[RMDB]
This 177-nucleotide RNA was probed chemically with DMS and 2A3.
DMS adducts were read by reverse transcription with MarathonRT.
It was measured as part of the RMDB libraries RFM100 and RFMREP.
2A3 adducts were read by reverse transcription with SuperScript II with manganese.
RNA sequence: GGGAACGACUCGAGUAGAGUCGAAAAAUCCGACCGUAGUCUUAGGUAAAACCUAUCUGUAAGGGUUUGACAAGCCUAGAUAGGUACUUAACCUCUAAAUCGAUAAGCCGUCAGUGUCCGAUGGGGUUCAAAAAUAUACAUUCGUGUAUAUUUUUGAAAAAGAAACAACAACAACAAC
Reactivity to DMS in 0.01 (KOAc 150mM, MgCl2 10mM, bicine 150mM(pH8.5), 24C), signal-to-noise 9, nucleotides 027 to 126: a090u010c010c020g010a100c090c080g020u010a060g010u000c050u010u010a030g000g000u010a070a060a090a060c000c000u000a010u000c010u010g020u020a110a140g000g000g000u000u000u010g020a130c210a120a140g000c010c000u000a000g010a010u000a010g000g010u000a020c130u010u010a090a050c020c010u000c100u010a060a080a060u020c060g000a070u010a090a150g000c040c030g010u010c050a060g000u010g010u010c040c030g010a070u010g010g010g000g020u010
Reactivity to 2A3 in 0.01 (KOAc 150mM, MgCl2 10mM, bicine 150mM(pH8.5), 24C), signal-to-noise 9, nucleotides 027 to 126: a010u030c010c020g060a060c030c030g080u070a040g050u040c050u100u070a020g020g000u020a030a050a030a040c000c000u000a000u000c000u020g090u090a130a230g050g010g030u030u020u030g030a050c050a060a020g020c000c000u010a010g000a010u000a000g000g010u010a010c010u030u040a020a020c010c000u040c030u130a120a150a100u080c030g030a070u020a180a030g030c020c010g030u040c030a040g050u020g030u140c010c010g030a030u060g030g010g000g000u000